RNA sequence: GGGAACGACUCGAGUAGAGUCGAAAAGGGGUCGUGCUGACAUGGUGUAUGUAGGCUUUUGACGAGCUGAAGCCUCCACGGCUCGAUAAGCCUAUUUACACCAACAGCAGCACGACGGAGGCACCCAAAGCGUAAGGAACUUCGGUUCCUUACGCAACGAUUGUAAAUUGUUCGCAAUUUACAAUCGAAAAGAAACAACAACAACAAC
Reactivity to 2A3 in 0.01 (KOAc 150mM, MgCl2 10mM, bicine 150mM(pH8.5), 24C), signal-to-noise 5, nucleotides 027 to 156: g090g020g040g010u000c000g010u010g000c000u010g030a160c050a220u270g000g000u000g000u010a010u010g020u000a000g020g000c030u040u060u180u150g160a100c020g000a000g000c010u010g020a070a020g030c010c000u030c010c010a040c000g000g010c000u010c000g000a020u060a140a020g000c000c000u000a010u000u010u000a000c020a000c010c000a010a000c010a010g000c000a000g000c000a000c000g000a000c000g000g000a000g000g000c020a040c010c010c000a060a110a000g000c010g000u010a000a000g010g020a000a000c030u100u150c300g060g030u000u000c000c000u000u000a000c000g000c000a000a000
Reactivity to DMS in 0.01 (KOAc 150mM, MgCl2 10mM, bicine 150mM(pH8.5), 24C), signal-to-noise 3, nucleotides 027 to 156: g000g000g020g010u010c000g020u000g010c000u000g000a050c040a300u000g010g040u000g000u000a000u000g020u000a020g010g020c000u000u000u000u000g020a300c090g000a030g040c010u000g010a040a130g010c030c000u000c020c030a300c020g000g010c000u000c010g010a090u000a040a040g020c000c000u000a010u000u010u000a030c010a010c000c010a020a030c060a100g000c000a020g020c000a000c010g020a020c000g010g010a050g100g040c010a170c020c020c020a060a080a160g010c000g020u000a030a020g000g000a020a020c010u000u010c300g010g000u000u000c000c000u000u000a000c020g020c000a000a050

Notes
The record gives the reactivity of an RNA of 207 nucleotides to 2A3 and DMS. For 2A3 the reverse transcriptase was SuperScript II with manganese. The 2A3 profile rests on 22,592 reads. The RNA was probed in 150 mM KOAc, 10 mM MgCl2 and 150 mM bicine (pH 8.5) at 24 C.